[RMDB]
Source information:
An RNA of 177 nucleotides, treated with DMS and 2A3 and read out base by base. In probing experiments dimethyl sulfate is read out at A N1 and C N3, which are open when not base-paired. Source: RMDB library TTRDEL, as collected in RNAgym. For DMS the reverse transcriptase was MarathonRT. 2A3 adducts were read by reverse transcription with SuperScript II with manganese.
RNA sequence: GGGAACGACUCGAGUAGAGUCGAAAAGAUAUGGACCCACGAAUUCCUGUUCACCGUUGAAAUCGGAAACGAUGGAGGUGACAGGGACGAGUGGGUCCUAAGUCAAAUCUCAUCUUCGGAUGAGAAAUCACUUUUUUACGUUCGCGUAAAAAAGUGAAAAAGAAACAACAACAACAAC
Reactivity to DMS in 0.01 (KOAc 150mM, MgCl2 10mM, bicine 150mM(pH8.5), 24C), signal-to-noise 2, nucleotides 027 to 126: g000a070u000a300u010g010g010a040c000c000c000a000c000g000a230a110u000u010c000c010u000g010u010u010c010a000c020c000g000u020u000g020a140a120a030u000c000g000g000a150a120a190c010g020a020u000g000g000a060g030g020u000g010a010c000a010g020g000g030a010c030g010a300g010u000g010g010g000u000c000c000u000a000a100g000u000c030a080a100a140u000c000u000c000a010u000c000u010u010c200g040g000a000u000g000a020g000a020a050a090
Reactivity to 2A3 in 0.01 (KOAc 150mM, MgCl2 10mM, bicine 150mM(pH8.5), 24C), signal-to-noise 1, nucleotides 027 to 126: g020a020u070a060u150g000g020a000c010c000c000a000c000g010a020a010u020u000c000c000u010g010u300u210c000a000c010c000g230u300u050g070a020a030a010u010c000g030g070a140a010a060c000g000a000u040g040g060a030g000g010u010g000a000c000a000g020g000g010a010c020g000a010g000u000g020g030g000u010c000c000u000a000a000g000u000c000a010a000a020u000c010u020c000a000u000c010u040u060c300g220g010a010u000g020a000g000a070a030a010